Structure probing data (2A3 and DMS) for a 177-nucleotide construct. The RNA was probed in 150 mM KOAc, 10 mM MgCl2 and 150 mM bicine (pH 8.5) at 24 C.
RNA sequence: GGGAACGACUCGAGUAGAGUCGAAAAAUUCCUAGUAGUCGCGUGUCACUAACGGGCGACGACUGCGUCCCUGUUCUUUGUACACACCGCCCGUCGUUAUCUAAGAUGGUGCUAUGUUCGAAGAGGGCUUUCCGUACUCUUUCGAGAGUACGGAAAGAAAAGAAACAACAACAACAAC
Reactivity to 2A3 in 0.01 (KOAc 150mM, MgCl2 10mM, bicine 150mM(pH8.5), 24C), signal-to-noise 8, nucleotides 027 to 126: a000u020u000c000c000u010a020g010u010a000g010u010c010g010c060g040u080g160u180c040a050c230u160a250a060c130g020g030g010c010g000a040c000g000a000c010u040g000c020g060u090c000c000c000u100g090u190u060c000u010u040u030g060u110a010c040a000c010a010c060c080g020c010c070c020g030u010c000g060u090u170a140u170c110u100a100a080g010a020u030g020g030u150g010c010u030a020u070g020u010u030c010g010a010a010g010a020g030g000g000
Reactivity to DMS in 0.01 (KOAc 150mM, MgCl2 10mM, bicine 150mM(pH8.5), 24C), signal-to-noise 4, nucleotides 027 to 126: a180u010u000c000c000u010a020g010u000a010g010u000c020g020c050g030u020g010u020c080a120c190u040a100a140c230g000g010g020c010g000a060c010g000a020c070u010g010c020g010u020c030c000c000u010g010u020u000c010u000u000u010g010u010a030c060a040c070a070c150c220g030c000c000c020g010u010c030g030u000u020a070u020c200u010a090a110g010a010u020g010g010u020g020c020u010a050u000g010u000u000c010g010a040a000g010a060g010g020g000

For DMS the reverse transcriptase was MarathonRT.